The record gives the reactivity of an RNA of 170 nucleotides to 2A3 and DMS. Conditions: 150 mM KOAc, 10 mM MgCl2 and 150 mM bicine (pH 8.5), 24 C.
RNA sequence: GGGAACGACUCGAGUAGAGUCGAAAAUCUUACAAGCCACUAAAUUUACUUUGUGGAACUACUUGUUUGAGACUAUUCCCACACAGUUGUUCCCACUCUUAUUUGUGACUAUGGCCUUCGUUAUGUUAAGCCGGCCACUUCGGUGGCCGGAAAAGAAACAACAACAACAAC
Reactivity to 2A3 in 0.01 (KOAc 150mM, MgCl2 10mM, bicine 150mM(pH8.5), 24C), signal-to-noise 2, nucleotides 027 to 129: u040c000u000u000a000c000a030a000g060c010c000a000c060u300a050a050a100u170u270u180a120c160u000u000u000g000u010g020g000a010a010c020u170a000c000u300u000g070u080u010u040g020a000g010a010c070u050a000u010u020c000c060c000a000c000a000c000a030g000u040u040g000u000u000c040c010c000a090c000u070c110u100u210a040u100u070u110g090u080g040a020c030u080a030u030g080g000c000c010u080u000c040g080u040u120a020u090g030u100u060a170a000g010
Reactivity to DMS in 0.01 (KOAc 150mM, MgCl2 10mM, bicine 150mM(pH8.5), 24C), signal-to-noise 2, nucleotides 027 to 129: u000c080u000u080a000c060a010a120g000c010c010a110c060u150a000a120a080u010u030u000a060c280u000u010u060g000u000g000g100a050a170c300u000a300c010u000u000g000u020u000u000g000a000g000a090c050u080a180u060u030c040c000c000a110c130a250c100a040g060u000u000g100u000u000c000c000c000a160c160u000c050u000u100a020u060u050u060g000u060g000a010c070u000a020u010g000g000c010c010u000u070c000g100u060u080a000u010g030u070u000a060a190g210